[RMDB]
RNA sequence: GGGAACGACUCGAGUAGAGUCGAAAAUAAAGACAGAGAGCAAAUCUAAAACACGCAAUGCAGAGGAAUGGUUACUGCCUGCUGUGUGCCUCUCCAGGGAGCACCAGGAGGGGCUGUGUGGGACAGGCACGCACUACCAGUUCGCUGGUAGUGCGUGAAAAGAAACAACAACAACAAC
Reactivity to DMS in 0.01 (KOAc 150mM, MgCl2 10mM, bicine 150mM(pH8.5), 24C), signal-to-noise 2, nucleotides 027 to 126: u020a050a120a140g020a090c080a100g010a080g010a060g010c050a080a090a090u010c070u000a060a070a140a100c010a060c040g010c020a060a070u000g020c000a050g010a100g010g000a100a010u010g010g030u000u010a100c100u000g010c010c050u000g030c050u010g000u000g030u010g000c030c000u000c010u000c010c020a130g000g030g000a160g010c210a110c020c010a080g000g020a030g010g010g000g010c010u000g020u000g040u010g010g020g010a220c070a070g000g010

Chemical mapping of a 177-nucleotide RNA with DMS.
The DMS profile rests on 1,344 reads.
DMS adducts were read by reverse transcription with MarathonRT.
The data come from the RNA Mapping Database (RMDB), library OK2TST.